Structure probing data (DMS and 2A3) for a 177-nucleotide construct.
The reactions ran in a buffer of 150 mM KOAc, 10 mM MgCl2 and 150 mM bicine (pH 8.5), at 24 C.
2A3 adducts were read by reverse transcription with SuperScript II with manganese.
For DMS, 1,961 sequencing reads were counted.
For 2A3, 1,776 sequencing reads were counted.

[RMDB]
RNA sequence: GGGAACGACUCGAGUAGAGUCGAAAAUCUGUCUGGCCACCGGCAAAGCGCGGCCCGCAGCCAUUGCUGCCAUGCAGCCUGUCGGACUCGCGGGUGAAGGCUUGGUAGUGUCGUCCAAGGGUCCAGGGUGGAGUAGGUAGUUCGCUACCUACUCCACAAAAGAAACAACAACAACAAC
Reactivity to DMS in 0.01 (KOAc 150mM, MgCl2 10mM, bicine 150mM(pH8.5), 24C), signal-to-noise 2, nucleotides 027 to 126: u010c040u000g000u010c020u010g000g000c020c010a160c190c050g010g020c080a050a070a080g000c030g040c080g010g000c020c010c050g010c010a010g010c020c050a110u000u000g010c010u000g020c000c160a120u010g010c020a050g000c010c170u000g010u000c130g030g010a090c030u000c170g020c070g030g000g000u000g020a070a190g000g000c000u000u010g010g010u020a060g000u000g000u000c040g010u010c050c060a040a240g010g010g010u020c020c020a100g010g010
Reactivity to 2A3 in 0.01 (KOAc 150mM, MgCl2 10mM, bicine 150mM(pH8.5), 24C), signal-to-noise 2, nucleotides 027 to 126: u020c000u030g110u020c030u020g020g020c010c030a030c020c040g000g020c030a120a060a070g060c130g010c040g100g010c000c000c000g080c000a020g030c000c020a050u050u130g000c000u010g000c030c020a150u300g000c010a000g020c020c030u150g080u120c070g030g150a300c020u040c120g000c010g000g010g010u040g090a060a040g120g000c010u030u030g080g000u150a160g090u000g010u070c030g020u030c080c020a050a100g080g020g010u080c020c000a010g070g020